[RMDB]
RNA sequence: GGGAACGACUCGAGUAGAGUCGAAAAAGCAAAGUUAUUUACUAUUUACUGUGUACAUAGAAAGCUUUAUUAUGUGUGGUGUAUCUAAAUUUUUUUUGCUGAAAUACAUUAUGGUCAAUCAAGCCAAACACCAUCCAAUGUUCGCAUUGGAUGGUGUAAAAGAAACAACAACAACAAC
Reactivity to 2A3 in 0.01 (KOAc 150mM, MgCl2 10mM, bicine 150mM(pH8.5), 24C), signal-to-noise 3, nucleotides 027 to 126: a000g070c070a050a030a000g020u130u040a100u030u110u000a100c050u040a050u060u110u050a030c050u000g040u060g060u190a020c000a000u030a020g090a060a070a000g050c000u240u220u040a100u130u020a060u130g010u030g050u030g020g140u020g010u050a000u000c040u100a060a120a240u180u050u000u000u000u000u010u140g000c010u010g070a040a060a020u160a050c020a010u120u200a060u170g030g050u020c030a040a080u050c070a230a010g010c000c000a000a140
Reactivity to DMS in 0.01 (KOAc 150mM, MgCl2 10mM, bicine 150mM(pH8.5), 24C), signal-to-noise 2, nucleotides 027 to 126: a030g040c000a010a010a030g000u000u010a030u000u000u010a070c070u020a010u010u000u000a050c000u000g000u030g010u000a000c030a000u000a050g010a010a060a240g020c150u020u000u030a040u030u000a030u060g000u000g000u010g000g030u000g020u000a010u010c260u000a020a000a010u000u000u000u030u100u000u000u000g000c000u010g000a040a020a050u070a070c120a050u060u000a080u010g000g000u040c050a040a130u040c300a070a120g000c000c000a020a080